[RMDB]
RNA sequence: GGGAACGACUCGAGUAGAGUCGAAAAUUGCUGCUGUCCCCCCAUGUCCACGCAACCAAAGAAGCGGUUGAAGCUAUUGGCCAGGCGGAUGUCAUUUUAAUCGGGCCGGGUAGUUUCUUAACCAGCCCUCUGACAUAAGAUUCGUCUUAUGUCAGAGAAAAGAAACAACAACAACAAC
Reactivity to 2A3 in 0.01 (KOAc 150mM, MgCl2 10mM, bicine 150mM(pH8.5), 24C), signal-to-noise 1, nucleotides 027 to 126: u060u030g000c010u010g000c040u080g130u220c020c010c000c080c000c000a040u060g020u010c010c000a010c000g010c010a020a060c010c020a030a010a030g100a100a000g050c010g000g050u030u040g000a040a010g000c000u020a030u050u030g010g030c000c000a010g020g030c000g050g040a030u050g070u040c020a030u030u150u030u210a100a070u100c040g000g040g000c030c000g000g040g000u000a000g000u000u010u010c000u010u020a030a060c030c030a000g060c000c010
Reactivity to DMS in 0.01 (KOAc 150mM, MgCl2 10mM, bicine 150mM(pH8.5), 24C), signal-to-noise 4, nucleotides 027 to 126: u010u010g020c020u010g010c030u000g010u010c000c010c000c030c020c020a070u000g000u000c000c020a050c090g010c040a120a180c040c040a050a070a090g000a150a140g000c050g000g000u010u000g010a070a090g000c030u000a050u000u000g010g000c030c050a150g000g020c160g000g010a060u000g010u030c120a100u000u010u010u010a060a140u010c090g010g010g000c010c010g010g000g000u000a040g000u000u000u010c020u010u000a050a070c030c010a140g010c050c090
The data come from the RNA Mapping Database (RMDB), library OK2TST. Chemical mapping of a 177-nucleotide RNA with 2A3 and DMS. High 2A3 reactivity points to a flexible backbone, as in loops and unpaired stretches. Reactivities are given for positions 27 through 126. For 2A3 the reverse transcriptase was SuperScript II with manganese. For DMS the reverse transcriptase was MarathonRT. The reactions ran in a buffer of 150 mM KOAc, 10 mM MgCl2 and 150 mM bicine (pH 8.5), at 24 C.